[RMDB]
RNA sequence: GGGAACGACUCGAGUAGAGUCGAAAAAAAUACUCGCCGGAGCAGCCAGCUUCGCAACCUGCCGAUAAUCUUCACGGCGAGAAGCAAUAAAGAUGGCAAUAAUAAGCCCCAACGUUGCACCGGUUCAAAUAAAUAAAUGCUUCGGCAUUUAUUUAUUAAAAGAAACAACAACAACAAC
Reactivity to DMS in 0.01 (KOAc 150mM, MgCl2 10mM, bicine 150mM(pH8.5), 24C), signal-to-noise 1, nucleotides 027 to 126: a080a110a130u010a090c100u000c060g040c060c040g010g020a100g020c010a080g000c060c080a120g010c030u000u010c070g000c130a090a110c120c020u000g050c000c010g020a070u010a100a130u010c240u030u000c140a110c040g000g020c020g030a000g000a040a240g020c040a070a060u000a110a080a060g000a100u010g010g000c000a080a050u000a040a080u030a080a200g030c020c000c130c040a020a090c150g000u000u000g010c020a100c030c010g010g010u000u010c070a070
An RNA of 177 nucleotides, treated with DMS and read out base by base. Reactivities are given for positions 27 through 126. The RNA was probed in 150 mM KOAc, 10 mM MgCl2 and 150 mM bicine (pH 8.5) at 24 C. For DMS, 704 sequencing reads were counted. It was measured as part of the RMDB library OK2TST.